[RMDB]
RNA sequence: GGGAACGACUCGAGUAGAGUCGAAAAGAUAUGGAAUGCAAGUUCAACAGCGUGUCAGUCGGAAACGACUGCACGACAUGAACACAUUCCUAAGUCAAAGACGGUGUUCGGUUCGCCGAACACCGUCCAAGCGAAAUGUGUUCGCACAUUUCGCUUGAAAAGAAACAACAACAACAAC
Reactivity to DMS in 0.01 (KOAc 150mM, MgCl2 10mM, bicine 150mM(pH8.5), 24C), signal-to-noise 3, nucleotides 027 to 126: g000a020u010a130u010g000g000a010a010u010g010c190a170a150g000u000u000c000a140a210c220a140g000c010g000u000g000u020c020a020g020u000c000g020g010a010a030a050c000g010a020c000u000g000c000a010c000g020a040c090a100u010g000a020a010c020a180c010a000u010u000c010c000u000a000a100g000u010c020a140a170a170g010a010c000g020g010u000g000u000u000c000g000g000u010u000c220g010c010c000g000a000a000c000a000c000c000g000u010c000
Reactivity to 2A3 in 0.01 (KOAc 150mM, MgCl2 10mM, bicine 150mM(pH8.5), 24C), signal-to-noise 3, nucleotides 027 to 126: g000a010u050a000u050g000g050a010a000u030g040c270a300a190g000u020u010c110a300a250c150a300g090c020g000u040g230u300c050a010g020u000c000g040g000a030a000a020c030g000a000c020u030g000c010a010c010g020a020c010a220u260g000a010a000c020a010c010a020u000u000c010c000u010a010a020g030u000c040a270a030a090g000a010c010g070g000u010g010u000u000c030g040g070u050u080c300g040c080c000g000a000a010c010a000c020c000g000u010c000